RNA sequence: GGGAACGACUCGAGUAGAGUCGAAAAGUGGUCGAGUGCGAAGCACUGGGGUAGAGAAAUAAACAGAAAGAGAACUACCCCGUCAGUCAGUCACUCUCUGUCUGAAUCUCUCUCUCAAAGACCACGAGGAUAGGAGGACCUUCGGGUCCUCCUAUCCAAAAGAAACAACAACAACAAC
Reactivity to 2A3 in 0.01 (KOAc 150mM, MgCl2 10mM, bicine 150mM(pH8.5), 24C), signal-to-noise 1, nucleotides 027 to 126: g010u010g030g000u000c000g000a000g010u020g020c190g190a170a000g000c010a000c000u000g000g020g000g040u150a000g000a040g130a000a140a220u210a030a110a030c030a020g040a000a180a000g090a000g020a000a020c040u020a040c000c000c010c000g060u040c000a000g000u000c030a000g000u020c030a010c070u000c010u000c000u000g010u000c020u000g030a080a080u060c020u000c000u000c000u000c000u000c060a190a160a000g000a000c000c000a000c000g040a010